[RMDB]
RNA sequence: GGGAACGACUCGAGUAGAGUCGAAAAGACGACUUUAGAAGAAGAGGCUAGGGGGUAUUCCGGUGUGGGAUACUUAGUAAUAUGCAACGCUAAUUGCAUAAGAUUGUAGGACGGAAUUUACAGUCUUUAGAGAUAAGCACGUUCGCGUGCUUAUCAAGUUAUUUCACUUGUUCGCAAGUGAAAUAACAAAAGAAACAACAACAACAAC
Reactivity to DMS in 0.01 (KOAc 150mM, MgCl2 10mM, bicine 150mM(pH8.5), 24C), signal-to-noise 2, nucleotides 027 to 156: g000a080c040g000a040c050u000u000u010a110g010a150a080g010a070a090g000a090g010g010c090u000a030g000g010g010g000g000u000a080u000u010c020c030g030g040u000g010u000g020g000g030a040u000a050c000u000u000a100g020u000a090a150u000a030u000g000c050a020a060c040g030c170u000a060a100u000u000g030c000a120u020a040a070g000a090u020u000g000u000a050g020g020a160c080g020g010a090a230u000u000u000a020c010a030g010u000c000u000u000u000a070g010a200g000a030u000a000a020g030c000a010c010g000u000u010c270g060c020g020u000g040c000u000u000a000u010c010a010a080
Reactivity to 2A3 in 0.01 (KOAc 150mM, MgCl2 10mM, bicine 150mM(pH8.5), 24C), signal-to-noise 5, nucleotides 027 to 156: g040a020c030g010a000c020u110u150u120a050g000a150a000g000a020a000g010a030g040g000c060u070a050g040g030g010g000g010u030a050u050u040c020c010g060g060u140g030u100g050g000g010a010u020a090c010u050u070a010g040u070a050a110u030a030u110g000c010a040a020c070g050c190u130a100a110u070u020g000c010a020u010a050a020g030a040u050u090g010u030a010g040g050a010c040g040g040a050a040u100u090u080a060c030a010g010u000c000u030u050u060a110g020a000g000a040u000a000a000g000c000a000c000g000u010u030c130g020c000g070u000g000c000u000u000a000u000c000a000a000